[RMDB]
The data come from the RNA Mapping Database (RMDB), library M2RFOK. An RNA of 207 nucleotides, treated with DMS and 2A3 and read out base by base. 2A3 adducts were read by reverse transcription with SuperScript II with manganese. DMS (dimethyl sulfate) methylates the pairing face of unpaired adenines and cytosines. For DMS, 5,992 sequencing reads were counted.

RNA sequence: GGGAACGACUCGAGUAGAGUCGAAAAACUGCAUCUACGGAUGCAGAACUACGUUCAUCCAAUUUAUUUGGACGCAUGAAAUGAGAAUAGGGAACGGGAUUCUCAUACGCAGGCUACGUCCUGCGAAAAAACUCCUUAUGCUUCGGCAUAAGGAGAACUGUAAUAGAUCGUUCGCGAUCUAUUACAGAAAAGAAACAACAACAACAAC
Reactivity to DMS in 0.01 (KOAc 150mM, MgCl2 10mM, bicine 150mM(pH8.5), 24C), signal-to-noise 3, nucleotides 027 to 156: a110c000u010g000c000a000u000c000u000a170c240g050g000a010u000g010c010a010g060a050a080c040u000a010c020g010u000u010c050a050u000c090c160a100a160u000u000u000a100u020u000u000g000g020a010c060g000c010a030u010g000a110a090a060u000g000a110g040a060a120u000a120g040g010g000a060a070c040g020g000g000a300u000u000c020u000c000a060u000a070c000g010c000a020g010g010c000u000a120c160g000u000c000c010u000g020c000g000a000a010a060a080a020a020c000u000c010c000u000u000a000u000g020c010u010u000c300g020g000c000a000u000a000a000g030g010a000g030a010a050
Reactivity to 2A3 in 0.01 (KOAc 150mM, MgCl2 10mM, bicine 150mM(pH8.5), 24C), signal-to-noise 6, nucleotides 027 to 156: a000c000u000g000c010a000u000c010u020a050c230g130g000a000u000g000c000a000g010a010a000c050u080a020c010g000u000u010c010a010u000c000c010a030a020u100u210u190a170u130u080u080g000g010a010c010g020c030a030u150g090a150a130a050u010g000a010g000a020a000u010a020g040g020g000a000a010c010g000g000g010a000u000u000c000u000c000a000u020a040c000g000c000a000g010g000c040u180a110c150g090u130c030c010u000g000c000g020a030a000a000a000a000a000c000u000c000c000u000u000a000u000g000c000u010u030c120g100g000c010a000u000a000a030g000g000a000g000a000a010